[RMDB]
Structure probing data (2A3 and DMS) for a 177-nucleotide construct. For DMS the reverse transcriptase was MarathonRT. 2A3 adducts were read by reverse transcription with SuperScript II with manganese.
RNA sequence: GGGAACGACUCGAGUAGAGUCGAAAAGAUAUGGAAUGUACCGACAUGCUUACUAUCGGAAACGAUAGAAGCAACAGCGGUCACAUUCCUAAGUCAAAGCCCUAGAUUCGUUCGCGAAUCUAGGGCACUCGUAAUACCGGUUCGCCGGUAUUACGAGAAAAGAAACAACAACAACAAC
Reactivity to 2A3 in 0.01 (KOAc 150mM, MgCl2 10mM, bicine 150mM(pH8.5), 24C), signal-to-noise 4, nucleotides 027 to 126: g000a010u030a020u060g000g000a010a020u000g020u010a020c010c000g120a220c230a300u200g000c010u030u090a300c010u020a000u010c010g020g000a040a010a000c000g000a000u010a020g010a020a000g040c010a060a100c170a090g050c010g000g000u010c060a000c000a040u000u000c010c000u010a040a000g020u010c050a170a130a040g020c030c000c000u010a000g000a010u000u000c010g010u060u080c300g010c030g220a010a000u050c000u000a010g000g010g000c000a000
Reactivity to DMS in 0.01 (KOAc 150mM, MgCl2 10mM, bicine 150mM(pH8.5), 24C), signal-to-noise 3, nucleotides 027 to 126: g000a030u000a180u000g000g010a020a000u020g000u000a030c000c010g030a150c120a200u020g010c010u000u020a160c000u000a010u000c000g000g000a060a030a080c000g000a010u010a010g000a000a000g000c000a100a090c300a140g000c000g000g010u000c300a000c000a010u010u000c000c010u000a020a080g010u000c010a140a180a180g000c010c010c000u010a010g000a010u000u000c000g010u000u000c290g010c000g040a010a000u000c000u000a000g000g010g020c000a000